RNA sequence: GGGAACGACUCGAGUAGAGUCGAAAAUAUAUGCAAACUUGUAUCAGGGCCGCAGCGAUUGGGGAGCGUGGAAGGCGUCUUGCGAGCUGCGGAGUGGAGCUCCCCGCGUACCCGCACACACAUUACAAAUUUAGUGCUAGUUCGCUAGCACUAAAUUAAAAGAAACAACAACAACAAC
Reactivity to DMS in 0.01 (KOAc 150mM, MgCl2 10mM, bicine 150mM(pH8.5), 24C), signal-to-noise 5, nucleotides 027 to 126: u030a090u020a060u020g000c070a040a090a110c110u020u010g010u020a060u020c100a090g010g010g020c020c020g020c010a040g000c020g010a180u020u030g040g000g000g000a030g000c020g030u030g000g020a100a100g000g000c060g000u020c030u010u010g000c080g010a170g000c020u020g000c020g000g020a090g010u000g020g010a180g000c010u000c000c000c010c010g010c040g030u000a070c040c020c020g000c130a070c070a030c110a090c100a040u020u030a060c170a030
Reactivity to 2A3 in 0.01 (KOAc 150mM, MgCl2 10mM, bicine 150mM(pH8.5), 24C), signal-to-noise 5, nucleotides 027 to 126: u150a010u050a020u080g030c040a040a050a090c080u070u110g030u080a090u130c050a040g000g030g010c020c010g010c010a000g010c020g170a190u160u210g010g000g000g010a020g030c030g020u080g050g070a120a030g080g000c010g010u030c020u050u100g080c040g040a030g000c000u010g000c010g020g010a000g000u040g000g010a020g000c000u010c000c000c000c000g010c020g000u030a050c000c010c020g020c020a020c000a000c000a000c000a070u060u270a130c070a090
The record gives the reactivity of an RNA of 177 nucleotides to DMS and 2A3. The reactions ran in a buffer of 150 mM KOAc, 10 mM MgCl2 and 150 mM bicine (pH 8.5), at 24 C. The 2A3 profile rests on 4,076 reads. For DMS, 9,321 sequencing reads were counted.